[RMDB]
RNA sequence: GGGAACGACUCGAGUAGAGUCGAAAAAAGAUAAAGCAGCUGAAUACCUCAUACCUCAAUUCAGAUCUAGGAAGAGUGUAUCAAUAAGUGGAGGAAAGGUAGUUCAAAAGGAAUUUGAUUUACCCGACAAGCGCAUCGUCUUCGGACGAUGCGCUUGAAAAGAAACAACAACAACAAC
Reactivity to 2A3 in 0.01 (KOAc 150mM, MgCl2 10mM, bicine 150mM(pH8.5), 24C), signal-to-noise 1, nucleotides 027 to 126: a000a090g020a000u110a070a000a000g030c070a110g050c000u000g000a060a060u000a000c000c000u000c000a000u290a300c000c000u000c040a190a270u220u090c160a080g110a130u110c000u180a040g270g140a000a040g070a000g000u020g020u070a130u110c170a000a040u070a110a000g070u020g280g060a000g000g000a000a000a000g030g000u000a160g070u000u000c010a250a000a000a000g280g000a130a130u220u000u000g000a020u000u000u270a090c000c000c000g000a000

An RNA of 177 nucleotides, treated with 2A3 and read out base by base. Conditions: 150 mM KOAc, 10 mM MgCl2 and 150 mM bicine (pH 8.5), 24 C. The data come from the RNA Mapping Database (RMDB), library OK1LIB. Values cover nucleotides 27 to 126. The 2A3 profile rests on 277 reads.